[RMDB]
Structure probing data (2A3 and DMS) for a 177-nucleotide construct.
For DMS the reverse transcriptase was MarathonRT.

RNA sequence: GGGAACGACUCGAGUAGAGUCGAAAAGGCGAGGUCUUCGGACCUCGCCAAAUCACCGCCAUUAUUGGCUAAGGCUACACGGACGGCCGGGUCAAAUGCCGAAAACUUCCGCCUUCGGGCGGAAGAACGUAAUGGGGAAGUUCGCUUCCCCAUUACGAAAAGAAACAACAACAACAAC
Reactivity to 2A3 in 0.01 (KOAc 150mM, MgCl2 10mM, bicine 150mM(pH8.5), 24C), signal-to-noise 2, nucleotides 027 to 126: g000g050c000g010a000g040g000u060c010u140u170c300g050g010a000c010c000u000c000g040c010c010a000a000a000u030c000a000c000c030g070c020c010a120u130u090a140u270u190g040g000c070u060a120a040g000g030c000u070a040c120a020c180g150g150a040c050g040g010c020c000g060g000g000u060c080a050a000a040u140g010c040c020g010a000a030a020a120c000u020u010c000c000g030c000c000u050u110c200g110g030g020c000g000g000a000a000g010a010a020
Reactivity to DMS in 0.01 (KOAc 150mM, MgCl2 10mM, bicine 150mM(pH8.5), 24C), signal-to-noise 1, nucleotides 027 to 126: g010g000c000g000a020g000g000u000c000u000u010c230g010g000a020c050c000u000c030g030c000c000a020a020a030u010c060a080c060c010g020c050c000a060u010u000a130u000u000g000g010c040u000a070a100g000g010c020u000a020c170a110c040g020g000a040c020g000g010c000c010g000g000g010u000c210a040a060a030u000g030c020c000g000a120a050a110a180c010u000u000c000c010g010c000c000u000u000c110g010g020g000c000g000g000a000a000g000a040a070